Chemical mapping of a 177-nucleotide RNA with 2A3 and DMS. Values are in units of 0.01, from 0 to 300, in steps of 10. As a SHAPE reagent, 2A3 marks flexible, mostly unpaired nucleotides at the ribose 2'-OH.
RNA sequence: GGGAACGACUCGAGUAGAGUCGAAAAGAUAUGGACAUGGAGAUGAUGGGACAAUGAUGUCGGAAACGAUUGAGUCCGUACAUCGUUGAAAUGUCCUAAGUCAAAGUGGUUUCUUCGGAAACCACAACUUAAUUUUCCUCUUCGGAGGAAAAUUAAGAAAAGAAACAACAACAACAAC
Reactivity to 2A3 in 0.01 (KOAc 150mM, MgCl2 10mM, bicine 150mM(pH8.5), 24C), signal-to-noise 2, nucleotides 027 to 126: g050a030u070a040u150g020g000a000c000a030u010g010g000a060g000a050u050g000a000u020g010g000g020a010c000a050a300u210g070a030u090g040u030c020g040g040a120a080a040c030g000a020u040u060g010a020g030u000c000c000g010u040a060c000a010u030c000g010u000u000g020a010a020a050u010g010u000c000c000u010a040a000g000u020c060a060a040a140g010u020g010g000u040u020u000c000u060u090c300g090g000a000a000a020c000c000a000c000a000a010
Reactivity to DMS in 0.01 (KOAc 150mM, MgCl2 10mM, bicine 150mM(pH8.5), 24C), signal-to-noise 4, nucleotides 027 to 126: g030a030u010a300u010g010g020a020c000a020u000g010g020a300g000a010u000g020a010u000g010g000g000a040c000a120a110u020g010a080u000g010u000c010g000g000a090a070a170c010g020a010u000u010g010a150g010u000c000c010g010u010a300c030a010u000c000g030u000u000g010a280a130a030u000g010u000c000c000u010a020a080g000u000c050a070a080a070g010u000g000g000u000u000u000c000u000u010c180g010g000a010a010a000c000c000a000c010a030a060
The reactions ran in a buffer of 150 mM KOAc, 10 mM MgCl2 and 150 mM bicine (pH 8.5), at 24 C. Source: RMDB library TTRDEL, as collected in RNAgym. For DMS, 3,015 sequencing reads were counted.